[RMDB]
Overview: The data come from the RNA Mapping Database (RMDB), library OK2TRN. Chemical mapping of a 177-nucleotide RNA with 2A3 and DMS. The reactions ran in a buffer of 150 mM KOAc, 10 mM MgCl2 and 150 mM bicine (pH 8.5), at 24 C. 2A3 is a SHAPE reagent: it acylates the 2'-hydroxyl of flexible nucleotides of all four kinds.
RNA sequence: GGGAACGACUCGAGUAGAGUCGAAAACUACAAUGUCCACAACUGAAGUCACAUCAACAGUUGGAGGAGUGACUGUCGAGACCAAGGAGUCGGAAUCGGAAUCCGCGACAACAGUGAUCGGAGGAGAUCACGCGUGAGUAUUCGUACUCACGCGUGAAAAAGAAACAACAACAACAAC
Reactivity to 2A3 in 0.01 (KOAc 150mM, MgCl2 10mM, bicine 150mM(pH8.5), 24C), signal-to-noise 1, nucleotides 027 to 126: c000u080a050c020a050a180u150g070u080c030c010a000c000a030a060c030u050g020a050a010g030u090c140a090c020a270u070c030a140a040c020a040g030u110u090g000g030a090g040g020a040g020u090g030a080c000u050g030u030c050g010a010g030a080c020c010a060a080g060g000a010g010u050c060g000g000a060a040u150c010g000g100a060a060u000c020c000g000c030g030a020c050a120a010c000a060g060u040g080a060u060c020g060g000a030g090g000a100g000a040
Reactivity to DMS in 0.01 (KOAc 150mM, MgCl2 10mM, bicine 150mM(pH8.5), 24C), signal-to-noise 2, nucleotides 027 to 126: c000u000a120c040a040a080u010g040u000c010c000a190c040a020a000c030u000g000a040a230g020u020c130a070c140a100u000c020a060a180c010a050g010u000u000g000g000a070g030g000a050g030u000g020a100c110u000g000u000c070g020a160g000a060c050c060a110a100g000g000a050g030u000c010g040g010a060a110u010c080g000g000a190a080u000c020c010g000c060g000a070c030a060a100c110a070g010u000g020a060u020c010g030g000a130g000g000a100g030a070